RNA sequence: GGGAACGACUCGAGUAGAGUCGAAAAGAGAGGAGUUAACCCGGAGAACUGAAACAUCUAAGUACCCGGAGGAAGAGAAAACAAUAGUGAUUCCGUAAGUAGCGGCGAGCGAACGCGGAUUAGCCCAACUUGUGUCAUUGUUCGCAAUGACACAAGUAAAAGAAACAACAACAACAAC
Reactivity to DMS in 0.01 (KOAc 150mM, MgCl2 10mM, bicine 150mM(pH8.5), 24C), signal-to-noise 5, nucleotides 027 to 126: g010a110g000a080g020g010a080g020u020u010a090a140c090c010c040g010g000a070g000a080a080c090u000g000a120a080a100c150a080u020c030u010a100a080g010u020a110c130c050c030g010g010a070g000g000a070a020g000a050g000a030a060a040a050c090a030a050u020a050g010u030g000a070u040u000c010c000g000u000a010a040g010u000a100g000c020g000g070c260g010a290g000c010g000a090a110c260g000c010g000g000a010u000u000a070g000c000c010c010a050
Reactivity to 2A3 in 0.01 (KOAc 150mM, MgCl2 10mM, bicine 150mM(pH8.5), 24C), signal-to-noise 4, nucleotides 027 to 126: g130a000g020a010g100g030a080g010u120u030a050a050c000c020c010g000g010a110g000a030a010c060u080g040a010a040a040c030a090u120c030u090a060a040g040u080a170c030c040c060g010g020a020g030g030a060a050g030a000g020a030a030a000a020c080a050a090u040a050g060u040g050a020u060u020c000c000g000u010a000a000g000u000a010g010c000g190g040c220g080a020g000c000g010a000a000c020g010c000g000g020a000u010u020a000g010c000c010c000a000
The record gives the reactivity of an RNA of 177 nucleotides to DMS and 2A3. 2A3 adducts were read by reverse transcription with SuperScript II with manganese. Conditions: 150 mM KOAc, 10 mM MgCl2 and 150 mM bicine (pH 8.5), 24 C. For DMS the reverse transcriptase was MarathonRT.